Record summary:
Chemical mapping of a 207-nucleotide RNA with 2A3 and DMS. Source: RMDB library RNAMAK, as collected in RNAgym. The 2A3 profile rests on 3,812 reads. 2A3 adducts were read by reverse transcription with SuperScript II with manganese. In probing experiments dimethyl sulfate is read out at A N1 and C N3, which are open when not base-paired.
RNA sequence: GGGAACGACUCGAGUAGAGUCGAAAAGGGGUCUUCCUCGAGCAUAGCAGGAAGGACAUGUACUGAAGCCUCCACGGUACAACAGCUGGAAGCUAUGCUAAGACAGGGAAGACGGAGGCACCCAAAAUGUUUAGUUAAGUUCGCUUAACUAAACAAACUCUUCCUAGAGUUUCGACUCUAGGAAGAGAAAAGAAACAACAACAACAAC
Reactivity to 2A3 in 0.01 (KOAc 150mM, MgCl2 10mM, bicine 150mM(pH8.5), 24C), signal-to-noise 4, nucleotides 027 to 156: g080g000g030g010u010c020u020u010c020c020u080c060g040a010g010c010a010u010a000g000c050a050g090g280a100a060g070g020a100c040a090u070g000u000a010c000u010g040a110a020g000c000c000u000c000c010a020c020g000g000u010a000c000a080a050c050a090g230c020u110g030g110a170a040g000c000u010a000u000g000c000u030a110a000g080a060c090a060g040g040g010a000a020g000a000c000g000g000a000g000g000c000a040c000c010c000a050a080a020a080u100g000u010u000u000a000g000u000u000a010a000g020u030u120c260g030c170u000u000a000a000c000u000a000a000a000c000a000a020a010
Reactivity to DMS in 0.01 (KOAc 150mM, MgCl2 10mM, bicine 150mM(pH8.5), 24C), signal-to-noise 1, nucleotides 027 to 156: g030g000g040g010u010c020u000u000c090c000u030c010g050a060g000c040a020u000a030g040c010a100g000g060a080a190g030g040a040c070a300u000g000u000a030c040u000g100a020a150g020c000c020u000c030c020a300c030g020g000u000a000c000a040a100c070a200g010c070u020g030g040a300a190g010c030u010a010u070g000c030u000a280a090g020a240c300a070g020g020g030a040a030g020a000c000g030g030a010g030g030c050a070c000c000c000a130a060a090a120u000g000u000u000u000a010g000u000u000a020a000g010u000u000c300g030c000u030u000a000a000c000u010a000a000a020c010a010a050a040